RNA sequence: GGGAACGACUCGAGUAGAGUCGAAAAACGAGAACACGAGAACGUUCGAGUGAGUACUCUCGUACGAUCUCGAGUGUGUUCGAGAACGAUCGUGUGAGUUCUCGUGUGUGUGAUCGUUCGUGUGUGAGAGAGUGUGAACUCACUCGUGAACGUUCUCAUUUGCUGCAACAUUCGUGUUGCAGCAAAUAAAAGAAACAACAACAACAAC
Reactivity to 2A3 in 0.01 (KOAc 150mM, MgCl2 10mM, bicine 150mM(pH8.5), 24C), signal-to-noise 3, nucleotides 027 to 156: a000c030g020a010g010a050a010c030a050c140g000a000g000a010a000c000g000u010u010c010g010a000g000u000g000a010g000u040a040c000u020c000u010c020g010u050a000c020g050a150u030c040u020c040g010a090g040u300g060u080g030u140u060c010g000a000g000a010a000c000g000a030u090c080g050u060g080u100g300a110g060u030u000c030u020c020g010u030g000u010g000u010g010u020g010a020u020c030g000u080u010c100g000u050g020u000g000u080g090a070g010a000g010a020g050u070g060u070g120a010a010c000u000c000a000c010u000c000g030u080g000a010a000c010g000u000u000c000u010c000